Conditions: 150 mM KOAc, 10 mM MgCl2 and 150 mM bicine (pH 8.5), 24 C. Structure probing data (DMS and 2A3) for a 177-nucleotide construct. DMS adducts were read by reverse transcription with MarathonRT.
[RMDB]
RNA sequence: GGGAACGACUCGAGUAGAGUCGAAAAUUGCUAACACUAUAUCACUGGCUUGAUUACAGAUUGACCUUUGACUUUUACAUGCCUCAAACAAAACAGCAUUUUCAUGAUGAGCCUUAUGAUAGUCAUACUAUACCGUGAUCUUCGGAUCACGGUAUAGAAAAGAAACAACAACAACAAC
Reactivity to DMS in 0.01 (KOAc 150mM, MgCl2 10mM, bicine 150mM(pH8.5), 24C), signal-to-noise 3, nucleotides 027 to 126: u010u000g040c050u000a060a080c130a070c090u000a120u000a030u000c030a110c070u000g010g000c020u010u020g010a100u010u000a110c150a050g030a120u000u000g020a060c090c050u000u010u000g010a060c060u000u000u020u020a050c090a060u000g010c060c010u020c060a100a070a100c110a030a030a090a080c160a050g020c080a100u000u000u000u000c060a050u030g000a130u010g000a040g020c030c020u000u010a060u000g000a080u000a090g000u000c100a050u010a200
Reactivity to 2A3 in 0.01 (KOAc 150mM, MgCl2 10mM, bicine 150mM(pH8.5), 24C), signal-to-noise 3, nucleotides 027 to 126: u080u020g040c020u040a080a010c050a000c070u070a040u020a010u300c050a040c080u010g030g030c030u060u040g070a070u040u160a030c030a060g080a090u100u020g010a050c010c000u030u060u110g030a070c030u110u040u050u080a070c050a070u070g020c030c000u080c060a080a130a120c020a040a080a030a040c020a000g050c020a030u110u040u040u070c040a060u080g070a020u040g010a010g040c010c000u080u050a070u060g040a030u030a040g050u060c010a020u050a160